[RMDB]
RNA sequence: GGGAACGACUCGAGUAGAGUCGAAAAAUCUCUCUCUGGGCAUUAAUGGAAUGCAUAUGCUAGCUUUGGAGUCAGAAGAGUGAUAGAGAAGGAAUAGAUUCCAAAAGGGGUGGAGCAUGAGGGGAUAGUGUAGUAGAGAAGAGUUACCCUGCUGUGACGGGUUAGAACUAUUCGUAGUUCUAACCCGAAAAGAAACAACAACAACAAC
Reactivity to 2A3 in 0.01 (KOAc 150mM, MgCl2 10mM, bicine 150mM(pH8.5), 24C), signal-to-noise 2, nucleotides 027 to 156: a000u010c000u000c010u010c000u000c020u050g090g000g030c060a070u070u160a170a070u220g050g070a130a060u100g000c040a010u050a030u220g010c030u020a050g020c040u060u020u060g030g040a040g020u060c020a010g010a130a020g040a110g050u080g020a050u060a060g150a030g040a110a010g020g020a030a020u100a120g050a100u040u070c000c000a010a060a010a020g040g000g000g040u040g000g030a050g020c070a080u090g030a030g000g030g000g000a030u030a060g050u090g030u040a090g050u040a000g000a000g030a180a020g010a020g010u010u010a030c010c010c000u010g000c050u050g000u030g040a050